[RMDB]
RNA sequence: GGGAACGACUCGAGUAGAGUCGAAAAACAUUUGGAUUACAUCAAUAGUAACUUGAGCGGAAGUAAACAGAACAAGAAGUACUGCGGUUAUUCAAGUUCAAAGUUCACACUAUCGCAAUAAAUUAAACCCUUUAAGCUGAUUCGUCAGCUUAAAGGGAAAAGAAACAACAACAACAAC
Reactivity to 2A3 in 0.01 (KOAc 150mM, MgCl2 10mM, bicine 150mM(pH8.5), 24C), signal-to-noise 2, nucleotides 027 to 126: a000c030a060u130u030u110g100g000a060u110u090a030c020a030u130c020a030a190u070a100g050u020a060a030c050u070u070g040a030g000c000g000g050a050a010g020u050a090a000a000c020a030g000a050a020c010a030a050g040a060a010g040u030a010c030u030g080c070g150g000u030u020a020u030u010c020a020a000g000u010u000c040a170a060a000g030u040u040c060a040c000a000c150u020a030u070c040g000c000a000a090u070a110a050a000u180u160a060a060a140
Reactivity to DMS in 0.01 (KOAc 150mM, MgCl2 10mM, bicine 150mM(pH8.5), 24C), signal-to-noise 1, nucleotides 027 to 126: a120c090a060u010u000u030g020g000a130u000u000a040c020a210u040c070a050a100u000a030g020u000a010a040c060u010u000g020a100g010c010g000g000a130a050g050u000a010a060a020c020a090g010a010a040c000a030a300g000a040a100g030u000a020c070u000g000c070g050g000u000u000a120u000u000c040a040a290g000u000u000c000a050a110a040g000u010u000c120a080c190a030c030u000a040u000c040g000c040a050a040u020a010a030a130u000u000a050a120a100